[RMDB]
RNA sequence: GGGAACGACUCGAGUAGAGUCGAAAAGGGGUUAGCGUUUGCAAAACGCUGUUAUUGCAAUGAUCUCGAUUUAGCGCAAGUAGGUCCGAAAUCCAGAUCAACAUUUCGGACCUCCGCGCUAAUAAAACAUGUUCCCCUUGUUCGCAAGGGGAACAUGAAAAGAAACAACAACAACAAC
Reactivity to 2A3 in 0.01 (KOAc 150mM, MgCl2 10mM, bicine 150mM(pH8.5), 24C), signal-to-noise 2, nucleotides 027 to 126: g020g010g010g000u050u070a040g020c030g050u010u040u150g090c090a080a110a000a000c080g020c140u010g050u030u100a190u110u050g040c030a080a090u080g080a070u060c010u020c000g070a080u000u020u030a000g010c000g030c020a090a060g020u060a010g150g000u030c000c010g020a000a020a010u090c110c070a040g080a250u130c050a040a090c010a040u020u000u010c000g010g000a000c000c000u000c000c000g000c000g040c000u010a000a000u020a000a010a000a010
Reactivity to DMS in 0.01 (KOAc 150mM, MgCl2 10mM, bicine 150mM(pH8.5), 24C), signal-to-noise 3, nucleotides 027 to 126: g000g000g010g020u000u000a030g010c030g010u000u000u000g000c220a120a030a030a010c020g000c040u010g010u000u000a080u010u000g000c080a090a070u010g010a070u000c020u000c020g010a090u010u000u000a010g000c000g010c000a070a110g020u010a020g010g000u000c000c000g000a010a020a010u010c150c140a180g010a150u010c180a090a130c220a050u000u000u000c010g000g000a010c000c000u000c020c170g020c000g010c010u000a000a000u000a040a020a060a160
Chemical mapping of a 177-nucleotide RNA with 2A3 and DMS. The 2A3 profile rests on 1,588 reads. The data come from the RNA Mapping Database (RMDB), library M2PK90. For 2A3 the reverse transcriptase was SuperScript II with manganese.